RNA sequence: GGGAACGACUCGAGUAGAGUCGAAAAAUCAACUGAAAUAUCCACGAUUCUUAUGGAAUAAUCACCAUAAUUUAUGCUCUCUCCUACUUCUAUCCAUCCUGUGUAGCUUGAUCCUUCGACAUAAGGACUCCUUGUAUACUUUCGAGUAUACAAGGAGAAAAGAAACAACAACAACAAC
Reactivity to DMS in 0.01 (KOAc 150mM, MgCl2 10mM, bicine 150mM(pH8.5), 24C), signal-to-noise 6, nucleotides 027 to 126: a090u000c060a060a120c100u010g010a070a090a090u010a090u000c020c030a100c090g010a100u010u000c100u010u010a030u000g000g000a090a050u000a070a080u000c160a080c020c010a020u000a020a030u000u010u000a070u010g020c020u000c030u010c030u000c010c030u000a070c050u000u000c030u000a060u000c030c030a060u000c020c040u010g010u000g030u000a060g000c060u010u000g000a130u000c020c010u000u000c090g000a090c130a070u010a060a060g010g010a190
Reactivity to 2A3 in 0.01 (KOAc 150mM, MgCl2 10mM, bicine 150mM(pH8.5), 24C), signal-to-noise 6, nucleotides 027 to 126: a010u080c030a020a070c060u110g040a060a040a060u110a060u060c020c020a060c090g050a110u160u060c010u070u100a050u060g020g050a080a050u120a150a070u120c030a030c040c000a030u030a080a070u090u120u150a090u160g000c000u000c000u000c000u000c010c000u020a050c020u060u020c010u030a070u000c020c000a030u010c000c030u050g020u030g000u070a020g040c020u020u060g040a040u050c000c000u030u040c060g100a070c030a080u170a060a010g040g020a030
About this RNA
The data come from the RNA Mapping Database (RMDB), library OK2TST. An RNA of 177 nucleotides, treated with DMS and 2A3 and read out base by base. For DMS the reverse transcriptase was MarathonRT. For 2A3 the reverse transcriptase was SuperScript II with manganese. The 2A3 profile rests on 7,720 reads. Conditions: 150 mM KOAc, 10 mM MgCl2 and 150 mM bicine (pH 8.5), 24 C.